Structure probing data (DMS and 2A3) for a 207-nucleotide construct. High 2A3 reactivity points to a flexible backbone, as in loops and unpaired stretches. The data come from the RNA Mapping Database (RMDB), library ARCHII. The DMS profile rests on 1,471 reads.
[RMDB]
RNA sequence: GGGAACGACUCGAGUAGAGUCGAAAAUCUGAAUGCUACAUGAAGAACAUAAGCCAGAUGACGGAACGGGAAGACCCAGGAUGUAGAAGAUCAUAACAUGAGUGAUUCGGCAGAUUUGGAUUCAUAUAUAUAUCCACCCAUGUGGUACUUCAUUCUACAUGCAUAGAUGCUUCGGCAUCUAUGCAUGAAAAGAAACAACAACAACAAC
Reactivity to DMS in 0.01 (KOAc 150mM, MgCl2 10mM, bicine 150mM(pH8.5), 24C), signal-to-noise 1, nucleotides 027 to 156: u040c060u010g010a100a050u010g000c020u000a050c040a020u000g040a020a060g000a080a170c060a090u000a040a120g010c000c000a120g000a130u000g030a150c000g000g000a120a100c050g040g020g000a050a150g020a110c030c000c060a180g070g000a060u000g000u010a060g020a040a070g010a010u000c060a110u000a080a100c040a070u030g000a130g060u020g000a090u000u000c040g030g020c020a060g040a140u000u000u000g020g030a090u010u000c060a120u000a070u000a110u000a060u010a070u020c020c010a060c110c020c010a110u000g000u000g000g010u000a060c060u000u020c010a060u000u000c090u000a120
Reactivity to 2A3 in 0.01 (KOAc 150mM, MgCl2 10mM, bicine 150mM(pH8.5), 24C), signal-to-noise 3, nucleotides 027 to 156: u030c050u060g030a060a030u040g030c010u040a010c010a050u040g070a050a080g060a110a030c020a130u170a120a020g010c020c020a060g000a120u090g020a010c040g010g020a050a000c010g010g020g050a130a090g140a110c010c050c000a020g010g000a010u050g020u050a040g020a090a000g010a060u060c050a040u060a130a110c010a060u130g020a040g020u090g020a050u060u050c020g030g000c000a020g010a120u080u100u090g040g010a010u070u060c110a010u040a000u000a000u030a020u010a000u280c010c000a040c010c030c010a010u050g010u030g010g010u030a050c050u010u050c000a050u050u000c000u000a080